[RMDB]
RNA sequence: GGGAACGACUCGAGUAGAGUCGAAAAGAGCUGAAGUACAGCAAGAACGACGCAAUCCUUGGCAAAGCGUCGAAGAUAAGCGUGCCGAAUGCCAAGGAUUAACGGCACGCGAGGCGAAGACGCCAGACAUAUAUGCUGGGUUCGCCCAGCAUAUAUGAAAAGAAACAACAACAACAAC
Reactivity to 2A3 in 0.01 (KOAc 150mM, MgCl2 10mM, bicine 150mM(pH8.5), 24C), signal-to-noise 9, nucleotides 027 to 126: g120a020g000c010u020g030a190a040g160u210a150c010a000g000c020a010a040g080a070a040c040g010a000c000g000c020a010a080u010c000c010u040u010g000g000c030a090a100a070g000c010g010u010c020g020a040a010g050a080u210a080a050g000c000g000u000g000c000c000g020a060a020u050g000c000c010a010a000g010g000a000u020u030a030a020c010g000g000c000a000c000g000c010g000a040g000g000c030g050a150a050g080a090c050g000c000c000a010g050a020
Reactivity to DMS in 0.01 (KOAc 150mM, MgCl2 10mM, bicine 150mM(pH8.5), 24C), signal-to-noise 7, nucleotides 027 to 126: g010a160g020c010u000g010a190a170g040u040a160c010a010g010c030a180a100g010a130a230c020g000a010c000g020c000a180a070u020c010c000u000u010g010g000c020a090a110a130g010c010g010u000c010g010a060a070g000a100u050a060a110g000c000g020u000g020c000c000g000a090a080u010g000c010c000a030a130g000g000a030u010u020a040a170c030g010g000c010a000c000g000c000g000a030g000g020c010g010a170a100g010a150c050g010c010c020a110g010a160

Chemical mapping of a 177-nucleotide RNA with 2A3 and DMS. High DMS reactivity at an A or C suggests that its Watson-Crick edge is free. 2A3 adducts were read by reverse transcription with SuperScript II with manganese. The DMS profile rests on 21,531 reads. DMS adducts were read by reverse transcription with MarathonRT.